Structure probing data (2A3) for a 207-nucleotide construct. The reactions ran in a buffer of 150 mM KOAc, 10 mM MgCl2 and 150 mM bicine (pH 8.5), at 24 C. 2A3 adducts were read by reverse transcription with SuperScript II with manganese.

RNA sequence: GGGAACGACUCGAGUAGAGUCGAAAACAGUCCUUCCAGAAGGCUAUGGGGAACCCCUGCGAGUUCUUCGUGGACAUCAUGUGACUCGUGGCGCAUGCCCCAGCCCUGCCUGAGGUGGGGAGCUGGCGGUCCUGCCGCAUGCAGAGCUCGCGUGGGAACUCCUAUCAGUCUUCGGACUGAUAGGAGUAAAAGAAACAACAACAACAAC
Reactivity to 2A3 in 0.01 (KOAc 150mM, MgCl2 10mM, bicine 150mM(pH8.5), 24C), signal-to-noise 1, nucleotides 027 to 156: c010a000g060u000c000c010u070u040c060c010a060g020a080a010g060g000c060u100a090u190g000g000g000g000a040a040c000c000c000c010u020g020c000g000a030g000u000u010c000u030u030c020g020u030g020g030a050c000a080u230c110a040u250g050u110g120a070c030u040c130g120u180g060g000c020g010c060a010u160g000c040c000c000c000a000g020c010c000c000u030g000c020c010u300g130a240g120g000u050g000g030g010g040a110g140c030u040g060g010c120g010g010u080c030c060u090g040c000c020g000c010a010u010g000c010a010g000a000g000c000u000c010g000c010g020u020g030g000g000a000